Description:
The record gives the reactivity of an RNA of 177 nucleotides to 2A3 and DMS. 2A3 adducts were read by reverse transcription with SuperScript II with manganese. The RNA was probed in 150 mM KOAc, 10 mM MgCl2 and 150 mM bicine (pH 8.5) at 24 C. It was measured as part of the RMDB library OK2TST.

[RMDB]
RNA sequence: GGGAACGACUCGAGUAGAGUCGAAAAUAAUCGUUGAAUAUCUUGCUGAUGUCUAAUACCACCGGAAGCAAUGACAGGAAUCGUCGUUGCCUUUACUAAUUGACCAGUUAAUUCAAAGUUAGGUCCGACCGUCGUAUGAUUUCGAUCAUACGACGGUAAAAGAAACAACAACAACAAC
Reactivity to 2A3 in 0.01 (KOAc 150mM, MgCl2 10mM, bicine 150mM(pH8.5), 24C), signal-to-noise 1, nucleotides 027 to 126: u080a000a020u150c060g060u000u030g010a000a010u100a040u090c030u090u150g010c020u030g020a110u090g080u040c040u130a050a030u050a180c030c110a040c030c060g060g010a010a000g000c000a010a030u000g000a000c020a020g050g300a150a160u220c080g020u020c010g020u000u000g040c000c000u040u120u040a130c060u050a090a110u070u030g020a010c000c000a010g050u040u030a070a040u060u000c020a030a020a020g030u030u060a030g050g000u000c010c080g030
Reactivity to DMS in 0.01 (KOAc 150mM, MgCl2 10mM, bicine 150mM(pH8.5), 24C), signal-to-noise 2, nucleotides 027 to 126: u000a110a010u010c080g020u000u010g020a080a030u000a070u020c120u000u010g020c030u000g010a190u010g040u000c000u000a050a110u000a120c100c100a160c170c110g000g030a040a080g000c010a010a010u000g010a020c020a050g000g020a120a120u000c190g030u000c020g010u000u000g000c030c030u000u000u000a040c160u000a070a110u000u000g010a030c060c030a040g000u000u000a080a090u010u030c050a040a030a090g010u030u000a020g020g000u000c020c070g010